[RMDB]
RNA sequence: GGGAACGACUCGAGUAGAGUCGAAAAUGCCAAUGCCAUGCGAGAGUGCCUUAAUGCUUUAAUGUAUUUUUCAUUUCGAGGCGCACCUGUCUCCGACAUUGGCGGUAGUUUAGCUUAUCACCUCGCAGAAACAUGAUAUUUUCGAAUAUCAUGUUUCAAAAGAAACAACAACAACAAC
Reactivity to DMS in 0.01 (KOAc 150mM, MgCl2 10mM, bicine 150mM(pH8.5), 24C), signal-to-noise 9, nucleotides 027 to 126: u010g010c010c000a020a020u000g010c020c020a140u010g020c080g010a040g000a100g040u000g010c060c040u000u000a040a040u000g010c180u000u010u010a050a060u010g020u010a060u010u000u000u010u010c050a040u000u000u010c140g020a020g010g010c010g030c050a060c130c100u010g000u000c020u000c070c060g010a020c020a010u000u000g000g010c020g010g010u000a040g010u000u000u000a090g010c070u000u000a060u000c070a120c050c020u000c110g020c170a180
Reactivity to 2A3 in 0.01 (KOAc 150mM, MgCl2 10mM, bicine 150mM(pH8.5), 24C), signal-to-noise 9, nucleotides 027 to 126: u130g010c000c000a010a000u030g010c030c050a080u110g010c090g020a020g010a010g020u020g010c000c020u070u080a070a020u090g030c030u110u130u190a110a070u170g140u160a190u080u160u020u040u080c040a050u020u070u150c060g010a000g000g000c020g000c030a040c010c060u130g060u080c010u010c020c030g020a040c010a020u010u020g000g000c010g010g000u010a020g000u000u110u140a040g000c040u080u050a050u140c010a060c050c010u030c030g040c040a060
An RNA of 177 nucleotides, treated with DMS and 2A3 and read out base by base.
DMS adducts were read by reverse transcription with MarathonRT.
In probing experiments dimethyl sulfate is read out at A N1 and C N3, which are open when not base-paired.
Source: RMDB library OK2TST, as collected in RNAgym.
For 2A3, 38,420 sequencing reads were counted.